[RMDB]
RNA sequence: GGGAACGACUCGAGUAGAGUCGAAAAGAUAUGGAGGAUUGACUCAACAGCAUACGGCGUCGGAAACGACGUUAUGACAUGAGUUGAUCCUCCUAAGUCAAAAGCUCUCUGGUUCGCCAGAGAGCAACUAUUUUGAUACCUUCGGGUAUCAAAAUAGAAAAGAAACAACAACAACAAC
Reactivity to 2A3 in 0.01 (KOAc 150mM, MgCl2 10mM, bicine 150mM(pH8.5), 24C), signal-to-noise 3, nucleotides 027 to 126: g010a010u010a010u050g000g000a000g000g000a010u020u010g020a010c020u010c080a300a130c130a270g050c010a020u060a060c110g160g000c000g070u010c000g000g000a020a020a000c010g010a010c000g000u020u010a020u010g030a010c140a280u300g000a000g000u000u000g020a000u000c000c000u000c000c000u000a000a000g010u000c000a010a010a020a100g000c000u000c000u000c000u010g000g160u080u140c300g060c100c000a010g000a000g000a010g000c000a000a000
Reactivity to DMS in 0.01 (KOAc 150mM, MgCl2 10mM, bicine 150mM(pH8.5), 24C), signal-to-noise 3, nucleotides 027 to 126: g000a020u000a150u010g000g000a010g010g000a010u000u000g010a010c000u000c000a090a120c190a200g000c020a010u000a120c300g000g020c000g010u000c000g000g000a040a030a090c000g010a000c010g000u000u000a000u010g000a050c080a230u010g000a000g000u000u000g000a000u000c010c000u010c000c000u000a000a050g000u000c020a090a100a150a150g010c000u000c000u000c000u000g000g000u000u010c250g030c010c000a000g000a010g000a000g020c010a000a030
Chemical mapping of a 177-nucleotide RNA with 2A3 and DMS. The reactions ran in a buffer of 150 mM KOAc, 10 mM MgCl2 and 150 mM bicine (pH 8.5), at 24 C. The 2A3 profile rests on 7,975 reads. For DMS the reverse transcriptase was MarathonRT.